Chemical mapping of a 177-nucleotide RNA with DMS and 2A3. It was measured as part of the RMDB libraries RFM100 and RFMREP. Values cover nucleotides 27 to 126. 2A3 adducts were read by reverse transcription with SuperScript II with manganese.
RNA sequence: GGGAACGACUCGAGUAGAGUCGAAAAGCUCUUAGUGGGCCAUUUUUGGUAAGCAGAACUGGCGAUGUGGGUUGAACCAAAUAUUGGGAUAAGACGUCUAAUAUUCACUAAUAGAUACCACAAAAGGGUCAUAUUGAUAUUUCGAUAUCAAUAUGACAAAAGAAACAACAACAACAAC
Reactivity to DMS in 0.01 (KOAc 150mM, MgCl2 10mM, bicine 150mM(pH8.5), 24C), signal-to-noise 7, nucleotides 027 to 126: g000c020u000c030u000u000a060g030u000g000g010g000c010c030a040u000u000u000u000u000g010g000u020a100a120g000c040a040g000a030a050c080u000g000g010c020g010a090u020g010u010g000g010g000u000u010g000a080a130c040c030a050a050a060u010a060u010u000g010g000g010a070u020a090a120g000a090c180g000u000c020u000a020a040u000a040u010u010c040a030c060u010a020a060u000a060g000a070u010a150c010c020a060c140a060a070a120a110g010g000
Reactivity to 2A3 in 0.01 (KOAc 150mM, MgCl2 10mM, bicine 150mM(pH8.5), 24C), signal-to-noise 9, nucleotides 027 to 126: g000c000u000c000u030u010a020g000u060g030g040g000c000c020a090u040u040u020u040u040g110g030u120a080a040g100c010a020g030a110a070c040u070g050g000c050g080a130u090g030u060g050g020g020u040u090g050a060a030c010c000a000a050a000u140a040u040u060g040g000g000a030u070a130a110g100a040c080g010u000c010u000a020a040u030a060u090u070c020a000c030u010a010a020u010a010g030a020u090a160c000c010a030c030a040a110a030a030g160g020